[RMDB]
RNA sequence: GGGAACGACUCGAGUAGAGUCGAAAACCGCGUUCCAUCCUUUCUUACCUGAUGGCCGGCAUGGUCCCAGCCUCCUCGCUGGCGCCGGCUGGGCAACAUUCCGAGGGGACCGUCCCCUCGGUAAUGGGUAAACGUUUAGGUUCGCCUAAACGUUUACAAAAGAAACAACAACAACAAC
Reactivity to 2A3 in 0.01 (KOAc 150mM, MgCl2 10mM, bicine 150mM(pH8.5), 24C), signal-to-noise 1, nucleotides 027 to 126: c040c010g040c020g040u030u060c010c050a090u070c040c030u100u090u070c030u040u070a110c000c020u050g070a080u130g200g000c000c010g000g010c070a070u080g050g050u160c010c010c010a000g010c020c040u090c020c030u050c060g040c030u030g000g000c020g020c020c000g000g030c010u020g040g020g000c020a070a010c000a010u000u040c000c030g000a000g000g030g000g000a020c050c070g190u160c020c030c010c000u010c010g000g000u010a000a000u010g000g000
Reactivity to DMS in 0.01 (KOAc 150mM, MgCl2 10mM, bicine 150mM(pH8.5), 24C), signal-to-noise 2, nucleotides 027 to 126: c010c020g010c030g000u000u000c020c010a100u000c080c070u000u010u020c050u000u000a140c080c030u020g000a110u000g000g000c040c010g000g000c030a110u020g020g010u010c290c000c010a030g000c000c070u010c150c050u010c130g040c000u000g000g010c190g030c000c030g020g020c010u000g020g010g020c080a110a120c020a030u000u000c010c010g000a030g000g000g000g000a270c230c300g000u000c000c000c000c000u000c000g010g000u000a000a000u000g010g010
Description: Conditions: 150 mM KOAc, 10 mM MgCl2 and 150 mM bicine (pH 8.5), 24 C. The record gives the reactivity of an RNA of 177 nucleotides to 2A3 and DMS. Values cover nucleotides 27 to 126.